[RMDB]
RNA sequence: GGGAACGACUCGAGUAGAGUCGAAAAGAUAUGGACAGUACCCUUCUUUUGACGAGCCUAAAUCGGAAACGAUUUAGAGCUCGAUAAGAAGGUACUGUCCUAAGUCAAAGCCUAGUUCGCUAGGCAAGUAAUAGAAAGUGUUCGCACUUUCUAUUACAAAAGAAACAACAACAACAAC
Reactivity to 2A3 in 0.01 (KOAc 150mM, MgCl2 10mM, bicine 150mM(pH8.5), 24C), signal-to-noise 9, nucleotides 027 to 126: g020a020u080a030u150g010g000a000c000a010g010u010a030c150c070c000u020u020c020u060u190u110u200g300a200c040g000a000g010c000c000u010a010a000a000u010c010g030g020a080a050a050c010g000a000u000u000u010a010g000a020g000c000u000c000g000a000u010a000a010g010a000a000g010g000u000a000c000u000g000u000c000c000u000a010a010g000u000c030a100a080a010g000c000c000u010a010g010u040u100c300g010c190u010a000g000g020c010a000a010
Reactivity to DMS in 0.01 (KOAc 150mM, MgCl2 10mM, bicine 150mM(pH8.5), 24C), signal-to-noise 7, nucleotides 027 to 126: g010a050u000a300u010g000g010a020c000a010g000u000a010c170c050c040u000u000c000u000u000u010u010g020a230c140g000a010g010c000c000u000a000a010a000u000c000g010g010a130a110a230c000g020a010u000u000u000a010g000a160g020c000u000c010g010a040u000a010a020g010a020a010g000g010u000a000c000u000g010u000c000c000u000a010a060g000u000c040a120a140a170g010c000c000u000a000g010u000u010c290g020c000u000a010g000g010c010a020a050
This 177-nucleotide RNA was probed chemically with 2A3 and DMS.
For 2A3, 57,249 sequencing reads were counted.
Values cover nucleotides 27 to 126.